[RMDB]
RNA sequence: GGGAACGACUCGAGUAGAGUCGAAAAGGGCAGUGAGCUCAUCUAUGUGUGCACCAACCGAAACUUUGUGCUCUGCUGCACGCGUAGUUUGAAGACGGAACGCUUCGCGAGGAUCGCCGUGAACGAAGUCAUCCUCACCAUUCGUGGUGAGGAUGACAAAAGAAACAACAACAACAAC
Reactivity to DMS in 0.01 (KOAc 150mM, MgCl2 10mM, bicine 150mM(pH8.5), 24C), signal-to-noise 2, nucleotides 027 to 126: g010g010g000c030a080g010u000g000a170g060c080u020c030a040u020c020u020a020u000g040u000g000u000g050c010a030c120c030a020a280c130c070g000a020a120a110c070u060u030u060g030u000g000c030u000c000u010g000c110u000g020c000a060c000g070c070g010u000a000g050u000u000u030g030a130a090g080a070c120g000g100a220a130c150g000c000u020u000c010g000c030g010a160g000g000a170u020c090g040c000c010g060u000g000a050a060c080g000a050a190
Reactivity to 2A3 in 0.01 (KOAc 150mM, MgCl2 10mM, bicine 150mM(pH8.5), 24C), signal-to-noise 3, nucleotides 027 to 126: g000g010g000c020a050g020u030g120a030g060c030u030c030a060u020c010u010a050u030g040u020g000u000g000c000a000c010c050a190a300c050c000g270a260a200a120c240u120u120u170g090u210g000c000u040c000u030g030c030u000g000c030a000c020g000c010g020u000a000g020u000u020u080g020a030a000g010a030c070g040g020a110a040c030g000c010u110u030c000g020c010g040a050g060g030a050u070c050g000c010c000g030u050g030a040a020c060g020a120a000
Source: RMDB library OK1LIB, as collected in RNAgym. Chemical mapping of a 177-nucleotide RNA with DMS and 2A3. Values cover nucleotides 27 to 126. The reactions ran in a buffer of 150 mM KOAc, 10 mM MgCl2 and 150 mM bicine (pH 8.5), at 24 C. The 2A3 profile rests on 1,619 reads. For DMS, 2,253 sequencing reads were counted.